[RMDB]
RNA sequence: GGGAACGACUCGAGUAGAGUCGAAAAUAGGGAGGUCAGGGUCAGGAGCCCCCCCCUGAACCCAGGAUAACCCUCAAAGUCAAAAUAACAAAAAGAAAAAGAAAAAGAAAAAGAAAAACGUAGCUUCGGCUACGUAAAAGAAACAACAACAACAAC
Reactivity to 2A3 in 0.01 (KOAc 150mM, MgCl2 10mM, bicine 150mM(pH8.5), 24C), signal-to-noise 1, nucleotides 027 to 135: u200a010g040g010g020a120g140g030u030c010a000g000g020g010u030c010a010g010g030a070g040c060c000c000c000c000c000c000c000u000g010a060a030c050c020c000a020g040g040a020u080a100a090c000c010c000u000c040a110a070a000g040u070c010a000a060a060a020u200a070a080c080a060a040a050a010a020g180a040a070a010a040a010g130a030a120a010a010a000g080a030a060a020a020a010g080a090a060a000a000a020c000g000u000a000g000c000u020u010c120g090g000c000u010a010c000g010u010a040
Reactivity to DMS in 0.01 (KOAc 150mM, MgCl2 10mM, bicine 150mM(pH8.5), 24C), signal-to-noise 1, nucleotides 027 to 135: u020a000g000g020g020a120g020g030u020c000a080g010g010g000u010c010a000g000g000a160g030c010c000c010c020c020c090c000c020u000g000a030a040c000c000c000a050g010g000a040u010a110a110c020c000c000u000c150a080a110a060g030u010c010a020a080a090a040u000a140a090c120a030a110a020a150a100g030a060a070a040a090a080g020a100a050a060a060a090g020a010a030a010a030a160g000a030a100a080a040a040c030g010u010a010g000c000u000u020c160g000g010c010u000a010c030g010u000a070
The record gives the reactivity of an RNA of 155 nucleotides to 2A3 and DMS. The data come from the RNA Mapping Database (RMDB), library P90LIB. For 2A3 the reverse transcriptase was SuperScript II with manganese. The DMS profile rests on 1,025 reads.